[RMDB]
RNA sequence: GGGAACGACUCGAGUAGAGUCGAAAACGAGGAAUUGCUAGUAAUCGCGGACUCAUUAAGACGCGAUGAAUACGUCCCUGUUCUUUGUACACACCGCCCGUCGUUAUCGAAGAUGGAGUCAGGCGCGUACUUCAUAUCGAUUCGUCGAUAUGAAGUAAAAAGAAACAACAACAACAAC
Reactivity to 2A3 in 0.01 (KOAc 150mM, MgCl2 10mM, bicine 150mM(pH8.5), 24C), signal-to-noise 9, nucleotides 027 to 126: c050g010a040g050g040a100a110u210u160g050c050u050a030g010u030a020a020u010c010g000c020g030g110a200c020u050c080a150u160u210a130a010g020a010c000g000c000g000a000u000g000a000a010u060a020c020g060u050c000c010c000u010g040u050u020c020u020u050u060g060u070a020c050a000c000a010c030c010g030c010c010c000g020u020c020g040u060u090a110u160c080g070a080a050g020a060u070g020g040a060g030u050c060a040g010g020c030g000c020g040
Reactivity to DMS in 0.01 (KOAc 150mM, MgCl2 10mM, bicine 150mM(pH8.5), 24C), signal-to-noise 9, nucleotides 027 to 126: c070g000a060g010g010a060a040u010u020g030c100u000a070g010u000a120a020u000c000g010c000g000g000a130c050u000c280a140u020u040a100a080g010a120c010g010c000g000a000u000g000a140a140u010a050c060g000u000c020c010c020u010g010u000u010c040u000u000u010g020u010a090c080a070c080a060c060c020g010c030c010c020g010u000c020g000u010u010a130u010c140g000a090a090g010a050u010g000g010a100g010u000c040a070g010g010c050g010c090g010
This 177-nucleotide RNA was probed chemically with 2A3 and DMS. DMS adducts were read by reverse transcription with MarathonRT. The reactions ran in a buffer of 150 mM KOAc, 10 mM MgCl2 and 150 mM bicine (pH 8.5), at 24 C.